[RMDB]
RNA sequence: GGGAACGACUCGAGUAGAGUCGAAAAGAUAUGGAUGUGUGGAGGCUAUGGCAACGUUGAAAUCGGAAACGAUGGAGUUGCAUAGUGAAGCACAUCCUAAGUCAAAACCGUUCGUUCGCGAACGGAAGCACUUUAUUUUGUUCGCAAAAUAAAGUGCAAAAGAAACAACAACAACAAC
Reactivity to DMS in 0.01 (KOAc 150mM, MgCl2 10mM, bicine 150mM(pH8.5), 24C), signal-to-noise 3, nucleotides 027 to 126: g010a060u000a300u000g000g000a000u000g000u010g000u000g000g020a300g010g000c000u010a000u010g020g020c000a000a000c000g000u000u010g000a100a130a030u000c000g030g010a110a130a160c010g000a010u000g000g000a090g010u000u000g000c010a020u000a000g010u000g020a300a300g000c000a010c010a000u000c000c000u000a020a050g000u000c020a100a080a130a170c010c000g000u000u000c000g010u000u000c240g020c000g030a000a000c000g000g000a040a050
Reactivity to 2A3 in 0.01 (KOAc 150mM, MgCl2 10mM, bicine 150mM(pH8.5), 24C), signal-to-noise 3, nucleotides 027 to 126: g010a010u050a020u160g000g000a000u010g030u000g020u040g000g050a060g300g010c000u000a010u040g300g060c000a000a010c010g170u300u060g000a040a030a010u010c020g010g040a080a040a050c010g000a000u010g000g040a030g010u010u000g000c010a010u010a010g120u180g030a000a000g000c000a000c000a000u000c000c000u000a000a000g000u010c030a000a020a170a250c000c000g000u000u020c000g020u020u080c300g000c020g180a020a000c010g000g000a010a000

An RNA of 177 nucleotides, treated with DMS and 2A3 and read out base by base.
The data come from the RNA Mapping Database (RMDB), library TTRDEL.